The data come from the RNA Mapping Database (RMDB), library TTRDEL. Structure probing data (2A3 and DMS) for a 177-nucleotide construct. For 2A3 the reverse transcriptase was SuperScript II with manganese. Conditions: 150 mM KOAc, 10 mM MgCl2 and 150 mM bicine (pH 8.5), 24 C. For 2A3, 3,443 sequencing reads were counted. For DMS, 1,710 sequencing reads were counted.
[RMDB]
RNA sequence: GGGAACGACUCGAGUAGAGUCGAAAAGAUAUGGAGACGAACUACAGUUGAGGUGCCGAAGAACUCGGAAACGAGGGAGGCACGCAGACUGCGUCUCCUAAGUCAAAGCUGGAGUUCGCUCCAGCAACAUUGGUACAGGCUUCGGCCUGUACCAAUGAAAAGAAACAACAACAACAAC
Reactivity to 2A3 in 0.01 (KOAc 150mM, MgCl2 10mM, bicine 150mM(pH8.5), 24C), signal-to-noise 2, nucleotides 027 to 126: g020a030u130a030u160g000g010a000g000a000c020g000a080a050c130u230a070c300a020g000u010u020g070a030g160g000u020g000c000c000g130a250a080g030a040a040c010u020c010g040g070a110a040a020c020g000a020g020g020g030a020g010g000c000a000c010g000c010a010g020a010c020u010g030c000g010u000c000u000c000c000u000a050a000g000u000c060a100a080a050g000c000u000g010g000a010g000u180u130c290g100c170u010c000c020a000g010c000a000a000
Reactivity to DMS in 0.01 (KOAc 150mM, MgCl2 10mM, bicine 150mM(pH8.5), 24C), signal-to-noise 2, nucleotides 027 to 126: g030a030u020a300u010g010g000a020g020a020c020g000a100a050c060u040a300c030a020g000u010u000g030a300g010g020u010g000c000c030g000a110a130g000a120a150c010u010c010g010g000a080a060a140c020g000a020g010g000g000a050g010g010c020a010c010g000c040a240g000a020c030u000g010c010g000u000c000u000c000c000u000a010a040g010u000c010a050a120a170g010c000u000g000g010a010g010u000u000c210g000c000u000c000c000a000g000c040a100a070